[RMDB]
RNA sequence: GGGAACGACUCGAGUAGAGUCGAAAACUCCCUUAGCCAUCCGAGUGGACGUACGUCCUCCUUCGGAUGCCCAGGUCGGACCGCGAGGAGGUGGAGAUGCCAUGCCGACCCGAAGAGGAAAGAAGGAUCGAUAUUAGUUCUUCGGAACUAAUAUCGAAAAAGAAACAACAACAACAAC
Reactivity to 2A3 in 0.01 (KOAc 150mM, MgCl2 10mM, bicine 150mM(pH8.5), 24C), signal-to-noise 2, nucleotides 027 to 126: c020u000c020c000c000u030u130a100g050c060c000a000u010c000c000g000a030g020u020g000g020a020c060g140u300a020c150g010u030c000c000u040c010c080u110u070c000g010g000a010u000g010c000c000c020a020g000g040u030c030g040g020a090c010c010g000c080g090a080g060g020a020g090g000u060g020g040a180g000a050u160g010c010c000a010u060g020c000c000g020a010c000c000c020g070a080a070g060a060g080g000a110a030a060g070a040a040g140g020a070
Reactivity to DMS in 0.01 (KOAc 150mM, MgCl2 10mM, bicine 150mM(pH8.5), 24C), signal-to-noise 3, nucleotides 027 to 126: c160u010c020c000c010u000u000a140g030c120c010a020u000c010c000g020a050g010u000g000g020a000c010g020u010a050c230g000u010c000c000u010c060c150u020u010c000g000g010a030u000g010c090c070c070a090g000g010u000c020g000g000a220c050c110g000c080g000a130g000g020a100g000g000u010g000g000a100g000a120u000g010c040c040a060u000g010c000c010g000a050c030c000c040g000a060a060g020a080g000g010a070a080a070g010a100a080g000g020a180